[RMDB]
RNA sequence: GGGAACGACUCGAGUAGAGUCGAAAAUUGUGUGUGGAUUGAUGUGGGUUUUAACUUGUUGCCGUUCGGGACGUUGACGAAAUGGAGCGAUUUGACCCGUCUUGAAACACGGACCAAGGAGUCUAACUGGUGUAAGUAGAUUCGUCUACUUACACCAAAAAGAAACAACAACAACAAC
Reactivity to 2A3 in 0.01 (KOAc 150mM, MgCl2 10mM, bicine 150mM(pH8.5), 24C), signal-to-noise 5, nucleotides 027 to 126: u110u100g070u000g000u010g000u020g070g010a020u010u100g020a060u060g080u220g050g020g030u040u020u030u120a040a070c040u030u040g030u060u130g110c020c010g010u010u020c000g020g000g120a140c140g070u110u170g070a050c010g040a020a020a070u110g030g020a010g030c010g030a010u020u010u060g020a030c000c000c020g000u000c000u010u020g020a030a020a000c050a030c040g010g000a010c020c000a030a070g050g020a070g050u010c030u020a040a060c070
Reactivity to DMS in 0.01 (KOAc 150mM, MgCl2 10mM, bicine 150mM(pH8.5), 24C), signal-to-noise 8, nucleotides 027 to 126: u030u010g010u020g000u000g010u010g000g010a190u000u010g010a030u010g020u020g030g000g010u000u000u020u010a030a050c130u000u000g010u000u010g020c020c010g000u000u000c030g000g010g000a110c190g020u010u010g000a100c030g000a030a030a040u020g010g010a070g010c020g010a070u000u000u000g000a040c040c010c010g000u000c010u000u000g000a300a080a040c070a050c030g000g000a090c020c020a120a120g010g000a120g010u000c020u000a060a160c120
An RNA of 177 nucleotides, treated with 2A3 and DMS and read out base by base. DMS adducts were read by reverse transcription with MarathonRT. The RNA was probed in 150 mM KOAc, 10 mM MgCl2 and 150 mM bicine (pH 8.5) at 24 C.